This 207-nucleotide RNA was probed chemically with 2A3. Reactivities are given for positions 27 through 156. It was measured as part of the RMDB library VIROID. Conditions: 150 mM KOAc, 10 mM MgCl2 and 150 mM bicine (pH 8.5), 24 C.
RNA sequence: GGGAACGACUCGAGUAGAGUCGAAAAUCCUCAGUACUCUUACUCUUUUCUGUAAAGAGGAGACUGCUGGACUCGCCGCCCGAGUUCGAGACUGAGCCAUCUCCGAGAGAAGAUUCCGCAGGGGACGGGAUCAGCUCCCGAGAGGGGAUCAGUGGUACCUAACUAGUCUGUUCGCAGACUAGUUAGGAAAAGAAACAACAACAACAAC
Reactivity to 2A3 in 0.01 (KOAc 150mM, MgCl2 10mM, bicine 150mM(pH8.5), 24C), signal-to-noise 3, nucleotides 027 to 156: u010c010c000u010c010a030g000u110a270c020u000c010u070u130a260c010u040c020u050u220u130u100c200u280g220u300a060a020a000g000a000g010g000a000g010a000c010u020g040c060u040g000g000a000c030u020c020g050c080c030g080c040c060c000g030a020g000u040u060c030g040a030g010a090c010u000g010a010g030c000c000a180u050c020u000c010c010g020a020g000a000g000a110a010g000a000u010u000c010c010g000c140a180g000g020g020g060a030c000g000g000g000a000u000c000a010g020c010u030c000c000c000g250a280g010a000g060g050g020g000a020u010c000a000g000u010g030g010u080a070